[RMDB]
RNA sequence: GGGAACGACUCGAGUAGAGUCGAAAAGAUCGGAAACAGCAGCAGGUGAGUCCGCCUUAUGUGAAGGAUCGGCUGAAACACGAGGAAAUACUGAGCCAACGCAAGACGGUAGCUGAACAGUAGCAACAAAACGCUUACGUGUUCGCACGUAAGCGAAGUGAAUCUGACGGUUCGCCGUCAGAUUCACAAAAGAAACAACAACAACAAC
Reactivity to 2A3 in 0.01 (KOAc 150mM, MgCl2 10mM, bicine 150mM(pH8.5), 24C), signal-to-noise 1, nucleotides 027 to 156: g030a070u110c060g040g000a050a060a040c040a020g100c050a020g000c020a020g020g020u000g050a050g100u060c030c000g000c030c000u120u100a090u080g140u090g120a040a060g040g000a060u100c030g030g000c010u070g040a140a100a040c090a000c040g030a020g000g060a000a130a000u160a100c100u080g000a030g020c000c000a090a040c050g000c150a130a040g040a010c050g000g090u050a010g000c040u060g010a030a000c030a020g050u060a000g000c000a000a040c090a080a160a000a010c020g000c000u000u000a000c000g000u000g020u000u090c160g000c020a000c010g000u000a000a020g000c000g000a050a000

This 207-nucleotide RNA was probed chemically with 2A3. The 2A3 profile rests on 726 reads. It was measured as part of the RMDB library M2RFPK. For 2A3 the reverse transcriptase was SuperScript II with manganese.